[RMDB]
RNA sequence: GGGAACGACUCGAGUAGAGUCGAAAAUAUGGUAUUAUUGUGAGGAUUAACUCCAGUUACUAUGUCAAGAGCAUCUAUCUUAGCAACUGGCCCUUGAUAUUUGCUCACCAAAUGGAAGUUAACACAGGAACAAGGUGUAUUAGUCCAUUCUCACACAAGUAUAGGAGUCGUUCGCGACUCCUAUACUAAAAGAAACAACAACAACAAC
Reactivity to 2A3 in 0.01 (KOAc 150mM, MgCl2 10mM, bicine 150mM(pH8.5), 24C), signal-to-noise 4, nucleotides 027 to 156: u210a050u040g030g040u070a070u180u050a110u130u290g030u050g020a030g020g040a070u090u080a060a030c000u030c000c000a020g020u090u050a060c090u120a100u200g100u090c120a180a030g010a000g000c010a010u000c020u040a020u010c010u040u110a010g000c030a050a230c160u140g160g000c010c050c040u010u030g010a000u000a010u020u030u020g000c000u010c010a060c030c040a010a090a090u050g010g010a080a020g050u050u040a060a000c070a010c050a100g080g020a110a030c060a140a060g090g010u060g020u100a190u180u090a050g030u000c000c010a000u090u000c000u010c000a030c010a000c000a040
Reactivity to DMS in 0.01 (KOAc 150mM, MgCl2 10mM, bicine 150mM(pH8.5), 24C), signal-to-noise 2, nucleotides 027 to 156: u000a080u000g030g030u000a080u000u000a040u020u000g010u000g020a120g050g040a110u000u000a070a030c010u010c000c000a100g020u000u010a060c020u000a020u000g000u020c060a070a180g000a090g000c020a070u000c050u020a050u000c040u010u010a030g030c040a140a080c120u010g030g020c110c040c050u010u000g020a070u000a020u000u010u000g010c040u000c030a170c100c050a080a090a070u020g030g020a100a130g020u000u000a020a040c030a080c020a090g010g020a030a040c040a090a130g000g050u000g000u020a110u000u000a070g030u000c020c040a240u000u000c020u000c080a090c130a030c110a090
Structure probing data (2A3 and DMS) for a 207-nucleotide construct. Reactivities are rounded to 0.1 and cut off at 0 and 3. For DMS the reverse transcriptase was MarathonRT. For 2A3 the reverse transcriptase was SuperScript II with manganese. The RNA was probed in 150 mM KOAc, 10 mM MgCl2 and 150 mM bicine (pH 8.5) at 24 C. The DMS profile rests on 2,933 reads.